This 177-nucleotide RNA was probed chemically with DMS and 2A3.
It was measured as part of the RMDB library OK1LIB.
Reactivities are given for positions 27 through 126.
Values are in units of 0.01, from 0 to 300, in steps of 10.
For DMS, 3,686 sequencing reads were counted.
The reactions ran in a buffer of 150 mM KOAc, 10 mM MgCl2 and 150 mM bicine (pH 8.5), at 24 C.
RNA sequence: GGGAACGACUCGAGUAGAGUCGAAAAACUAUUUGUUCUAUAGCAAAUAAACCCGAAACACAGUAUAUAUUUGUUAUAUAUGCUUUGUGGUACACAGCUGUUAGGACAUGAGCCAUCAGGGUCCAAAAUCGCUAGCUAUAUUCGUAUAGCUAGCGAUAAAAGAAACAACAACAACAAC
Reactivity to DMS in 0.01 (KOAc 150mM, MgCl2 10mM, bicine 150mM(pH8.5), 24C), signal-to-noise 3, nucleotides 027 to 126: a080c210u000a020u000u000u000g020u000u010c150u030a120u040a070g000c020a010a030a030u020a020a080a120c040c000c020g020a170a110a060c010a000c030a030g000u000a020u000a000u000a020u010u010u000g000u040u010a070u000a000u000a010u000g010c010u000u000u000g000u010g000g000u020a080c130a100c140a140g000c040u010g000u020u000a110g000g010a020c020a040u010g020a070g020c110c120a070u000c070a030g000g000g000u020c000c060a050a040a070
Reactivity to 2A3 in 0.01 (KOAc 150mM, MgCl2 10mM, bicine 150mM(pH8.5), 24C), signal-to-noise 4, nucleotides 027 to 126: a000c050u040a040u060u000u050g020u050u000c080u070a120u300a150g000c010a020a050a000u050a080a070a070c000c000c020g020a030a090a000c010a000c000a000g010u010a010u000a010u010a010u020u160u170g110u250u030a030u030a000u030a000u000g000c000u000u020u090g030u030g010g050u070a030c060a010c010a080g040c020u070g030u150u120a040g030g020a030c020a090u060g030a010g060c060c000a040u050c040a020g090g000g110u000c000c000a090a030a000